[RMDB]
RNA sequence: GGGAACGACUCGAGUAGAGUCGAAAAACGUUCGAACGAUCUCUCACGAUCACGUACGUGAGUUCACGUACACGAUCGAACACUCGUGAUCUCACGUUCACGAGAGUGUGUACGUGAACGAUCACGAUCACACUCACGUGAGAUCUCUCACGAACACAACUUUCCCUCCUUUCGAGGAGGGAAAGUUAAAAGAAACAACAACAACAAC
Reactivity to 2A3 in 0.01 (KOAc 150mM, MgCl2 10mM, bicine 150mM(pH8.5), 24C), signal-to-noise 2, nucleotides 027 to 156: a000c030g000u000u010c010g000a080a040c060g000a040u050c020u000c000u000c080a040c030g010a080u020c020a020c220g050u070a010c000g000u010g020a070g090u140u230c040a000c000g010u000a000c020a000c050g060a100u090c030g020a050a010c050a000c010u000c000g000u000g000a000u000c020u010c020a050c140g030u060u030c040a020c100g050a060g020a060g040u150g020u020g020u080a040c020g000u030g010a030a010c030g000a000u030c000a000c010g020a020u090c120a020c150a250c060u120c040a100c080g010u000g010a040g000a110u060c020u000c000u010c080a080c040g000a000a000c060a010c030

The record gives the reactivity of an RNA of 207 nucleotides to 2A3. For 2A3 the reverse transcriptase was SuperScript II with manganese. For 2A3, 1,315 sequencing reads were counted. Source: RMDB library OK3TST, as collected in RNAgym. Conditions: 150 mM KOAc, 10 mM MgCl2 and 150 mM bicine (pH 8.5), 24 C.